RNA sequence: GGGAACGACUCGAGUAGAGUCGAAAACUGCAGGUCAACGGUGCUUCUUCAGAUCAGCUAUUGCAGAAGAAAGGUCAGCCAAGCGCUCUGGGCCAGUACGACUGUAUAUAGGAGCUUCUGAUUUCAACCAGAAGCUAACUCUCUCCGAAACAAUGAGCACUAAAAUUUACUUCGGUAAAUUUUAGUGAAAAGAAACAACAACAACAAC
Reactivity to DMS in 0.01 (KOAc 150mM, MgCl2 10mM, bicine 150mM(pH8.5), 24C), signal-to-noise 1, nucleotides 027 to 156: c030u000g000c010a080g010g030u000c070a120a080c070g050g040u000g000c050u010u000c010u000u000c030a070g000a050u010c040a110g020c050u000a040u010u000g010c020a180g000a140a150g000a100a060a100g010g010u010c030a090g020c000c040a050a180g010c080g010c010u020c020u000g020g070g010c050c030a120g030u000a070c050g010a140c020u030g040u000a060u000a120u000a100g030g020a050g060c040u000u010c010u000g010a050u010u000u010c070a000a080c050c000a020g010a000a070g020c010u010a010a020c030u030c020u000c020u000c040c010g010a260a090a080c080a060a100u000g010a110g050
Reactivity to 2A3 in 0.01 (KOAc 150mM, MgCl2 10mM, bicine 150mM(pH8.5), 24C), signal-to-noise 3, nucleotides 027 to 156: c010u040g050c020a020g010g040u060c020a050a040c080g040g010u030g010c030u020u060c000u120u070c020a020g010a180u050c010a030g060c040u080a070u170u150g010c020a010g040a120a000g030a070a140a020g020g030u050c030a010g020c040c060a090a040g030c040g010c070u050c050u070g030g000g000c030c010a020g040u040a030c030g040a050c040u030g050u040a060u010a030u090a200g120g030a020g000c000u000u020c000u000g070a080u090u280u300c070a040a020c030c000a000g000a040a000g000c000u000a020a030c000u010c000u000c010u000c030c030g090a100a090a010c040a090a110u210g010a050g000
Source: RMDB library OK3TST, as collected in RNAgym. This 207-nucleotide RNA was probed chemically with DMS and 2A3. The RNA was probed in 150 mM KOAc, 10 mM MgCl2 and 150 mM bicine (pH 8.5) at 24 C. The 2A3 profile rests on 1,548 reads. For 2A3 the reverse transcriptase was SuperScript II with manganese. Reactivities are given for positions 27 through 156.